Chemical mapping of a 177-nucleotide RNA with 2A3 and DMS.

[RMDB]
RNA sequence: GGGAACGACUCGAGUAGAGUCGAAAAGAUAUGGAUCAACUCAGACAUGCUGUUCGGAAACGAAUACAGCAACAGCUGACUUGAUCCUAAGUCAAAACUCGUCUGGAAGUUCGCUUCCAGACGAGAAUCUCACUUAUUAGUUCGCUAAUAAGUGAGAAAAAGAAACAACAACAACAAC
Reactivity to 2A3 in 0.01 (KOAc 150mM, MgCl2 10mM, bicine 150mM(pH8.5), 24C), signal-to-noise 6, nucleotides 027 to 126: g010a000u050a000u080g000g000a000u000c000a000a010c000u000c010a020g080a300c050a140u060g000c000u020g010u030u010c000g020g020a040a030a020c000g020a050a040u220a180c020a010g080c000a030a050c060a070g150c000u000g000a010c010u000u010g000a000u000c000c000u000a030a020g000u000c020a000a020a130a230c000u000c000g000u000c000u000g000g020a020a010g010u090u160c210g120c150u000u000c010c000a010g000a000c000g000a000g000a000a000
Reactivity to DMS in 0.01 (KOAc 150mM, MgCl2 10mM, bicine 150mM(pH8.5), 24C), signal-to-noise 6, nucleotides 027 to 126: g000a030u000a300u010g000g010a010u000c000a000a010c080u000c000a010g010a150c100a160u000g010c000u000g020u000u000c010g010g000a070a070a140c000g010a030a070u010a090c020a020g010c010a030a080c300a130g010c000u000g000a020c120u000u000g000a010u000c000c000u000a010a070g000u000c030a070a090a080a130c000u000c000g010u010c000u000g000g000a020a010g010u010u010c230g020c010u000u000c000c000a020g010a000c000g010a000g000a030a050